[RMDB]
RNA sequence: GGGAACGACUCGAGUAGAGUCGAAAAAAGCGCGCGAACGCCUUCGCGUCCGUUCCACCGGACAGCAUGUACGGCACCGUGCGACCGUCUGGGUCGACCGCCAACACCGCGGCGUUCAUGGCGGCGAUGCAACAUCAAGCUUCGGCUUGAUGUUGCAAAAAGAAACAACAACAACAAC
Reactivity to 2A3 in 0.01 (KOAc 150mM, MgCl2 10mM, bicine 150mM(pH8.5), 24C), signal-to-noise 1, nucleotides 027 to 126: a040a020g110c070g010c000g050c000g020a010a060c060g000c020c010u080u150c060g000c010g010u000c000c020g030u140u130c030c090a110c180c040g000g000a010c020a070g000c020a040u200g000u130a060c120g020g010c010a030c030c050g100u110g070c030g000a010c000c000g050u100c030u220g120g050g000u040c010g030a220c010c000g000c040c000a110a010c050a020c120c060g010c060g040g000c050g000u060u020c060a050u140g080g000c000g010g000c010g000a020
Reactivity to DMS in 0.01 (KOAc 150mM, MgCl2 10mM, bicine 150mM(pH8.5), 24C), signal-to-noise 2, nucleotides 027 to 126: a040a070g000c060g050c010g000c080g020a060a140c100g000c030c030u000u000c160g000c010g050u000c030c030g000u000u040c090c230a140c300c040g030g000a040c010a080g050c030a150u000g000u000a030c200g000g000c020a120c120c030g000u000g020c050g020a030c020c040g010u000c130u000g000g030g060u020c000g000a070c010c080g020c010c060a100a050c110a090c120c160g000c090g010g000c010g020u020u000c010a070u010g000g000c000g000g000c010g000a110
Chemical mapping of a 177-nucleotide RNA with 2A3 and DMS. Source: RMDB library OK2TST, as collected in RNAgym. 2A3 adducts were read by reverse transcription with SuperScript II with manganese. Values are in units of 0.01, from 0 to 300, in steps of 10.